Chemical mapping of a 207-nucleotide RNA with 2A3. For 2A3 the reverse transcriptase was SuperScript II with manganese. Reactivities are given for positions 27 through 156. Conditions: 150 mM KOAc, 10 mM MgCl2 and 150 mM bicine (pH 8.5), 24 C. Source: RMDB library OK3TST, as collected in RNAgym.

RNA sequence: GGGAACGACUCGAGUAGAGUCGAAAACCUGCCAGCUACACGGCCGCUUCUACCUGUACACGGACUGCUUUGUGGCCCAGCUGAUGGUGCGGCUGGGCCUGCAGGCAUUUCUCACUCACCUGCUGCCCCAUGUCCUGCAGGUGCUGGCGGGCGCAGACCAGCCGAUGAUAUUCGUAUCAUCGGCUGGAAAAGAAACAACAACAACAAC
Reactivity to 2A3 in 0.01 (KOAc 150mM, MgCl2 10mM, bicine 150mM(pH8.5), 24C), signal-to-noise 4, nucleotides 027 to 156: c010c010u010g050c060c040a050g020c030u100a070c080a020c080g060g020c020c020g040c020u100u020c030u110a050c000c020u030g030u100a070c100a040c180g050g030a050c020u050g060c040u110u190u190g110u120g020g010c000c000c000a020g000c030u030g020a150u120g120g090u130g030c030g000g000c000u000g000g050g010c030c000u010g010c010a000g000g000c000a030u070u200u050c140u060c040a050c010u100c020a060c010c000u020g000c020u080g020c030c000c010c030a070u140g020u030c010c010u010g000c010a020g000g000u000g010c010u010g000g050c000g010g000g000c040g010c020a040g040a090